About this RNA: Conditions: 150 mM KOAc, 10 mM MgCl2 and 150 mM bicine (pH 8.5), 24 C. Structure probing data (2A3 and DMS) for a 177-nucleotide construct. For DMS, 1,984 sequencing reads were counted. DMS adducts were read by reverse transcription with MarathonRT. High 2A3 reactivity points to a flexible backbone, as in loops and unpaired stretches.

[RMDB]
RNA sequence: GGGAACGACUCGAGUAGAGUCGAAAAGGUUUGAUGAGGAUUCUGAAGACUGCACGUGAAAGCAGCAAGGGAAAGACCCCGUUUGUAGAUAGCAGAGCCUAUGGACUGAGGAUCACCGAUAUGAGCAGUCUUCAAGCAAAUUCGUUUGCUUGAAGACAAAAGAAACAACAACAACAAC
Reactivity to 2A3 in 0.01 (KOAc 150mM, MgCl2 10mM, bicine 150mM(pH8.5), 24C), signal-to-noise 1, nucleotides 027 to 126: g090g000u060u040u060g150a080u070g030a030g060g050a100u130u000c030u060g020a130a020g040a120c000u010g000c020a020c080g100u050g110a130a050a000g020c050a010g000c030a040a060g030g010g000a020a050a200g100a100c010c030c020c010g040u030u050u060g030u020a050g010a140u080a030g060c020a020g020a020g130c000c030u060a040u040g000g010a020c030u050g010a020g040g000a050u030c000a030c020c010g040a010u050a020u120g080a030g000c040a000
Reactivity to DMS in 0.01 (KOAc 150mM, MgCl2 10mM, bicine 150mM(pH8.5), 24C), signal-to-noise 3, nucleotides 027 to 126: g020g030u000u000u010g020a090u000g020a080g000g010a110u000u000c060u000g000a150a090g000a110c030u000g010c030a060c100g020u010g010a060a120a120g000c010a040g000c070a100a130g010g010g000a100a120a150g000a110c040c000c010c040g000u000u000u000g000u000a060g010a100u000a090g000c090a100g000a100g020c080c000u000a040u000g010g010a060c040u010g010a060g000g000a080u000c030a100c050c040g000a110u000a050u010g000a110g030c070a110